The record gives the reactivity of an RNA of 207 nucleotides to 2A3 and DMS.

RNA sequence: GGGAACGACUCGAGUAGAGUCGAAAAAUUCGUGGUAAGCUAGGGUCAAUGAGCUUAUAGGUGUUAUAAAGACUCGCUGGUGUUUGUCUCCUUGAGGCAUACGGCUUAAUCAAAACUCUCAAAGUUUGACCUCAAAUCAGGUAGGAAUACCCGCUGACAUUUCGAGAUAGUUCGCUAUCUCGAAAUGAAAAGAAACAACAACAACAAC
Reactivity to 2A3 in 0.01 (KOAc 150mM, MgCl2 10mM, bicine 150mM(pH8.5), 24C), signal-to-noise 4, nucleotides 027 to 156: a000u080u060c060g020u040g060g030u040a040a000g000c030u030a030g070g000g000u050c030a050a100u120g030a040g030c020u060u050a040u110a120g070g020u060g010u120u070a130u040a100a270a040g040a050c020u000c080g030c030u060g050g060u040g040u000u090u090g060u000c030u000c030c000u030u110g010a000g000g000c010a020u040a100c020g020g020c030u040u130a030a030u100c060a010a040a110a110c050u080c020u030c070a100a060a020g010u020u050u070g100a120c000c000u020c040a050a080a080u070c020a010g090g010u070a030g000g050a020a050u040a090c030c010c030g000c030u010g000a020
Reactivity to DMS in 0.01 (KOAc 150mM, MgCl2 10mM, bicine 150mM(pH8.5), 24C), signal-to-noise 2, nucleotides 027 to 156: a140u000u000c050g030u010g010g030u020a040a090g030c010u000a070g010g010g030u010c040a090a120u000g010a090g010c010u000u000a090u000a120g020g030u000g030u000u010a070u000a070a100a120g000a080c020u000c060g010c050u000g010g030u000g010u000u000u000g020u000c000u000c000c090u000u010g010a040g010g060c010a170u010a080c110g010g010c050u000u010a050a090u000c080a070a000a060a050c070u000c030u010c070a050a030a080g020u000u000u000g030a100c000c010u000c020a020a070a180u010c050a030g000g020u000a040g000g020a150a160u000a060c010c000c050g030c100u000g000a190
For 2A3, 2,151 sequencing reads were counted. For 2A3 the reverse transcriptase was SuperScript II with manganese. The reactions ran in a buffer of 150 mM KOAc, 10 mM MgCl2 and 150 mM bicine (pH 8.5), at 24 C. The DMS profile rests on 3,576 reads.